[RMDB]
Conditions: 150 mM KOAc, 10 mM MgCl2 and 150 mM bicine (pH 8.5), 24 C. An RNA of 177 nucleotides, treated with DMS and 2A3 and read out base by base. 2A3 adducts were read by reverse transcription with SuperScript II with manganese. The 2A3 profile rests on 37,260 reads.
RNA sequence: GGGAACGACUCGAGUAGAGUCGAAAACCGCACUUCUUCGGAAGUGCGGAAAUACCGAGAUUGUACCUCGGUAGAAGUACAUAACCCUUGGAAUCAAGGGAAAAAGCGUGAGCUUCGGCUCACGCAAGUACAUUAUAUGGUUCGCCAUAUAAUGUACAAAAGAAACAACAACAACAAC
Reactivity to DMS in 0.01 (KOAc 150mM, MgCl2 10mM, bicine 150mM(pH8.5), 24C), signal-to-noise 9, nucleotides 027 to 126: c000c000g010c010a010c000u000u000c000u000u010c200g020g010a020a010g010u000g000c000g000g000a010a030a080u000a050c000c000g000a020g010a090u000u010g010u010a250c080c000u000c000g010g010u000a010g000a060a090g010u010a090c150a080u000a110a130c000c000c000u000u000g000g010a150a130u010c010a010a010g000g010g010a010a030a060a090a050g000c000g020u000g000a010g010c000u000u010c200g020g000c000u000c000a010c000g010c000a000a030
Reactivity to 2A3 in 0.01 (KOAc 150mM, MgCl2 10mM, bicine 150mM(pH8.5), 24C), signal-to-noise 9, nucleotides 027 to 126: c000c000g000c000a000c000u010u010c010u030u040c080g130g010a010a000g000u000g000c000g000g000a010a020a000u020a000c000c010g000a000g000a030u140u200g050u170a090c020c000u010c000g010g000u010a020g020a080a010g060u110a050c050a110u160a160a160c000c000c000u010u010g080g090a150a160u300c020a010a010g020g000g000a080a060a010a030a000g000c000g000u000g000a000g000c010u040u090c270g060g000c000u010c000a000c000g000c000a000a000